The data come from the RNA Mapping Database (RMDB), library TTRDES. Chemical mapping of a 177-nucleotide RNA with DMS. Reactivities are given for positions 27 through 126. Conditions: 150 mM KOAc, 10 mM MgCl2 and 150 mM bicine (pH 8.5), 24 C. The DMS profile rests on 972 reads.
RNA sequence: GGGAACGACUCGAGUAGAGUCGAAAAGAUAUGGAGUGCUCAACGUGGAGGCUUGGUUCGGAAACGAACCGAAGCCUAUGAAGCGUUGAGGCACUCCUAAGUCAAAACAUGGACUUCGGUCCAUGAAUCUUGCAGACUUGUUCGCAAGUCUGCAAGAAAAAGAAACAACAACAACAAC
Reactivity to DMS in 0.01 (KOAc 150mM, MgCl2 10mM, bicine 150mM(pH8.5), 24C), signal-to-noise 1, nucleotides 027 to 126: g010a040u010a300u000g010g010a010g010u000g020c000u030c000a000a040c000g010u000g000g030a010g030g010c000u010u010g000g000u000u000c000g040g000a130a020a230c000g020a010a010c000c010g010a000a010g010c000c000u000a100u020g080a170a230g000c000g000u000u000g010a050g040g010c010a010c000u000c000c000u010a000a080g040u000c080a170a070a110a260c040a040u010g000g000a010c000u000u040c200g050g000u020c000c000a000u010g000a150a120